[RMDB]
RNA sequence: GGGAACGACUCGAGUAGAGUCGAAAAUACGCCAAUUUCGAUUGGCGUAACACGCAAACCGGCCGAAAGGCAUUUUAUGCGAACGGUGGCGAAAGCCUAAAAACGCACUGUCAUUCGUGACAGUGAAUAACUGGUUGAGAUUCGUCUCAACCAGUUAAAAAGAAACAACAACAACAAC
Reactivity to 2A3 in 0.01 (KOAc 150mM, MgCl2 10mM, bicine 150mM(pH8.5), 24C), signal-to-noise 3, nucleotides 027 to 126: u070a000c000g000c000c000a030a010u040u040u100c200g130a030u000u000g000g000c000g010u000a000a020c010a000c010g040c010a060a100a060c020c010g040g020c000c000g080a120a040a010g020g000c010a000u020u080u030u060a080u050g010c000g020a070a030c050g090g070u050g000g020c000g020a100a020a010g030c010c010u080a110a060a010a000a020c110g010c030a000c000u000g000u000c000a030u040u030c200g050u030g000a000c000a000g000u000g020a010a020
Reactivity to DMS in 0.01 (KOAc 150mM, MgCl2 10mM, bicine 150mM(pH8.5), 24C), signal-to-noise 4, nucleotides 027 to 126: u000a010c000g000c000c000a010a010u000u000u020c190g020a020u000u000g000g010c000g010u000a010a050c200a180c040g020c050a030a060a060c100c090g000g000c000c010g010a090a050a150g010g010c010a030u000u020u000u010a100u000g020c040g010a100a150c150g000g000u000g020g010c000g000a080a060a120g020c010c010u000a030a010a040a070a080c250g010c000a000c000u000g000u000c010a050u000u000c230g020u000g000a020c000a010g010u000g020a050a070

The data come from the RNA Mapping Database (RMDB), library M2PK50. Structure probing data (2A3 and DMS) for a 177-nucleotide construct. For 2A3, 4,859 sequencing reads were counted. The RNA was probed in 150 mM KOAc, 10 mM MgCl2 and 150 mM bicine (pH 8.5) at 24 C. DMS (dimethyl sulfate) methylates the pairing face of unpaired adenines and cytosines.